[RMDB]
RNA sequence: GGGAACGACUCGAGUAGAGUCGAAAAGGUACACUAAGCUGGCUUGCCCACUCCAAGUUGAGAGUUGGGCCAUGGGAUUUGGGCGAAGGCUCACGUCUCCUGGUCCCUAUAACGGAGGGAACCGCAUGAGGCUGGUUUCACAGAGCAGUGAACACUUGAGUAGAACUUUGUUCGCAAAGUUCUACUCAAAAGAAACAACAACAACAAC
Reactivity to 2A3 in 0.01 (KOAc 150mM, MgCl2 10mM, bicine 150mM(pH8.5), 24C), signal-to-noise 2, nucleotides 027 to 156: g060g030u150a070c040a010c040u120a110a050g020c020u010g050g010c050u090u080g070c000c050c010a120c000u000c010c010a220a100g070u090u110g130a110g010a050g110u240u080g000g000g020c000c010a010u020g000g000g020a000u000u010u040g010g000g010c030g070a110a050g150g010c010u010c020a000c010g000u000c010u000c000c000u010g010g030u100c020c010c000u120a090u040a110a010c060g020g010a010g000g000g100a070a040c030c030g020c080a100u100g040a060g100g000c070u150g000g050u000u040u040c060a080c000a000g030a000g050c040a010g000u000g020a080a020c030a010c040u020u050
Overview: The record gives the reactivity of an RNA of 207 nucleotides to 2A3. For 2A3 the reverse transcriptase was SuperScript II with manganese. It was measured as part of the RMDB library ARCHII. The 2A3 profile rests on 949 reads. Values cover nucleotides 27 to 156.